[RMDB]
Notes: Chemical mapping of a 207-nucleotide RNA with 2A3. The data come from the RNA Mapping Database (RMDB), library M2RFPK. Reactivities are given for positions 27 through 156.
RNA sequence: GGGAACGACUCGAGUAGAGUCGAAAAGUUGUGUAACUUCAUUUAAAUGAAUUGAAACAAAUUUAAUACAAGUGGAUGUAGGAUAACCGUCCGUCCUUUACAUUGGAAUAAAAGUGAUCUAAAAUUCGGCAGGGACGAGUCUUCGGACUCGUCCCAAGUAAACGUACAUCUUCGGAUGUACGUUUACAAAAGAAACAACAACAACAAC
Reactivity to 2A3 in 0.01 (KOAc 150mM, MgCl2 10mM, bicine 150mM(pH8.5), 24C), signal-to-noise 1, nucleotides 027 to 156: g010u000u010g010u020g020u020a020a010c010u010u000c030a060u170u040u180a190a170a110u110g020a010a030u090u150g000a100a050a000c020a000a100a090u120u200u230a110a070u220a080c010a070a040g100u020g050g030a010u040g070u130a000g040g030a100u010a090a160c000c000g050u000c000c000g040u040c000c000u040u020u010a060c030a060u040u070g120g040a070a000u070a260a050a010a030g100u070g030a080u050c060u140a000a000a250a180u080u000c020g030g040c030a090g010g000g000a000c000g020a000g000u000c010u000u040c130g110g000a000c070u000c000g000u000c000c020c000a000a000